[RMDB]
RNA sequence: GGGAACGACUCGAGUAGAGUCGAAAAAGCAGCUGGUCAGGGAUGUUGAGGCUGAGGCGGAGAGGCUCCGCGGCGAGAUAGAGAGGCUCGUCGCGAGGUCCGCGGAGCUGGCGAGGAUGGGCCGGUCCCUGAUGUCCUAGUUCGCUAGGACAUCAGGAAAAGAAACAACAACAACAAC
Reactivity to DMS in 0.01 (KOAc 150mM, MgCl2 10mM, bicine 150mM(pH8.5), 24C), signal-to-noise 2, nucleotides 027 to 126: a050g030c040a060g010c020u000g010g020u000c040a030g010g020g000a090u010g010u010u020g010a180g020g010c070u000g010a160g010g020c040g010g010a200g020a140g010g000c010u000c020c010g020c000g020g000c000g010a020g010a060u010a090g010a170g000a090g000g020c000u000c010g020u000c020g020c010g020a040g010g010u000c000c030g000c050g010g010a090g000c010u020g010g000c080g010a090g000g000a060u020g000g010g010c030c040g020g000u000c040
Reactivity to 2A3 in 0.01 (KOAc 150mM, MgCl2 10mM, bicine 150mM(pH8.5), 24C), signal-to-noise 2, nucleotides 027 to 126: a000g040c020a000g010c020u070g030g070u070c050a030g010g060g030a070u090g080u160u090g200a070g030g000c000u030g000a040g080g050c010g050g020a080g040a040g100g060c010u030c030c010g000c000g000g010c010g020a010g020a020u110a060g180a020g020a030g230g000c000u000c010g030u020c000g000c010g010a000g010g020u000c010c030g000c030g030g010a030g010c020u050g000g030c030g030a020g030g010a030u070g050g010g020c020c010g000g000u070c030

Structure probing data (DMS and 2A3) for a 177-nucleotide construct. Values cover nucleotides 27 to 126. For DMS, 3,751 sequencing reads were counted. 2A3 adducts were read by reverse transcription with SuperScript II with manganese. The data come from the RNA Mapping Database (RMDB), library OK2TST. Reactivities are rounded to 0.1 and cut off at 0 and 3.